[RMDB]
RNA sequence: GGGAACGACUCGAGUAGAGUCGAAAACAUUACAAACGGCAUCGUCUUCAUCGUCGUUGAGCGGCAUACUCUCUGGAUUCUCGAUCUUUACAAUCACCUCGGUCAUGGUGUCAUCGAUGCUGUCCAGUACUACUGGGACCUUCGGGUCCCAGUAGUAAAAAGAAACAACAACAACAAC
Reactivity to 2A3 in 0.01 (KOAc 150mM, MgCl2 10mM, bicine 150mM(pH8.5), 24C), signal-to-noise 5, nucleotides 027 to 126: c020a070u210u300a060c070a040a120a000c010g020g000c020a040u050c060g080u020c040u120u030c030a080u030c030g090u010c020g060u060u040g040a020g030c000g010g000c000a030u070a220c000u030c020u000c010u040g030g030a100u070u040c030u020c070g070a090u000c070u090u150u110a100c100a080a090u090c050a090c000c020u060c060g070g020u040c030a090u130g020g000u010g020u050c020a040u070c020g030a010u070g000c010u000g030u010c020c030a020g020
Reactivity to DMS in 0.01 (KOAc 150mM, MgCl2 10mM, bicine 150mM(pH8.5), 24C), signal-to-noise 2, nucleotides 027 to 126: c060a120u030u060a050c170a020a110a120c050g000g000c010a080u000c070g000u010c060u000u010c080a050u020c030g000u000c110g000u060u010g000a060g030c010g010g010c040a040u010a060c020u000c010u030c000u000g000g000a100u010u020c020u000c010g000a020u010c060u000u030u010a090c170a060a090u040c020a050c010c050u020c120g000g000u010c080a070u010g000g000u000g010u000c110a070u000c090g010a020u020g010c040u000g000u020c060c050a100g000